[RMDB]
RNA sequence: GGGAACGACUCGAGUAGAGUCGAAAAAAGUUGCACCAGGUACGGAUACCAGACGUUGCCAAACUGGGUGACAUGAGGAUCACCCAUGUACUGUCCCUUGGCAGCCGUACCUGGUGCUGGUGAAAAAUAGCUAAAGAUAUUUCGAUAUCUUUAGCUAAAAAGAAACAACAACAACAAC
Reactivity to DMS in 0.01 (KOAc 150mM, MgCl2 10mM, bicine 150mM(pH8.5), 24C), signal-to-noise 9, nucleotides 027 to 126: a080a070g010u000u000g010c000a010c000c000a020g000g010u000a010c010g000g000a130u010a090c120c070a090g010a070c160g010u010u000g010c040c030a020a030a040c030u000g000g000g010u000g000a010c030a140u010g020a140g010g000a210u000c010a010c000c000c000a010u010g020u000a040c170u000g000u000c010c040c020u000u000g000g010c010a110g010c000c000g010u000a010c000c000u000g000g000u000g000c000u000g000g010u010g010a030a060a070a080a120
Reactivity to 2A3 in 0.01 (KOAc 150mM, MgCl2 10mM, bicine 150mM(pH8.5), 24C), signal-to-noise 7, nucleotides 027 to 126: a000a000g240u120u040g000c000a000c000c000a000g000g000u000a000c010g000g020a040u050a130c010c020a030g040a070c060g100u130u080g040c020c020a050a050a040c040u020g000g000g010u000g000a010c040a100u290g170a120g140g050a110u010c010a020c010c000c000a010u090g010u010a040c050u100g030u030c010c000c030u000u010g010g000c010a010g030c000c000g010u000a000c000c000u000g000g000u000g000c000u000g000g000u070g040a040a020a010a030a050